[RMDB]
RNA sequence: GGGAACGACUCGAGUAGAGUCGAAAAGAAUGGCGGGACCCCACUCUGCAGGGUCCGCGUUCCAUUCUUUCUUACCUUGUGGCCGGCAUGGUCCCAGCCUCCUCGCUGGCGCCGGCUGGGCAACAUUACACAGCUUAGUUCGCUAAGCUGAAAAGAAACAACAACAACAAC
Reactivity to DMS in 0.01 (KOAc 150mM, MgCl2 10mM, bicine 150mM(pH8.5), 24C), signal-to-noise 9, nucleotides 027 to 129: g000a050a020u030g010g010c000g040g000g020a040c020c010c010c080a140c120u030c130u050g030c070a200g000g000g000u010c020c030g030c000g030u040u040c020c010a000u000u020c020u010u010u020c080u040u030a090c010c040u000u000g020u020g010g020c020c020g000g000c050a050u040g020g000u040c300c010c000a040g020c010c100u040c130c090u040c210g000c010u000g000g000c280g000c010c000g020g010c000u030g010g010g020c040a070a040c060a040u050u050a110c200a160
Reactivity to 2A3 in 0.01 (KOAc 150mM, MgCl2 10mM, bicine 150mM(pH8.5), 24C), signal-to-noise 9, nucleotides 027 to 129: g000a000a010u000g000g000c010g000g000g000a010c010c010c020c010a090c080u300c130u190g070c150a070g000g000g000u000c010c000g030c010g010u100u020c000c000a000u000u000c000u010u010u000c020u050u110a110c010c000u030u070g060u060g060g060c000c010g000g020c080a160u190g030g030u090c040c000c000a000g000c000c020u160c050c040u110c100g000c000u010g010g000c020g000c000c000g010g000c010u010g000g010g000c010a060a020c000a060u080u160a110c150a010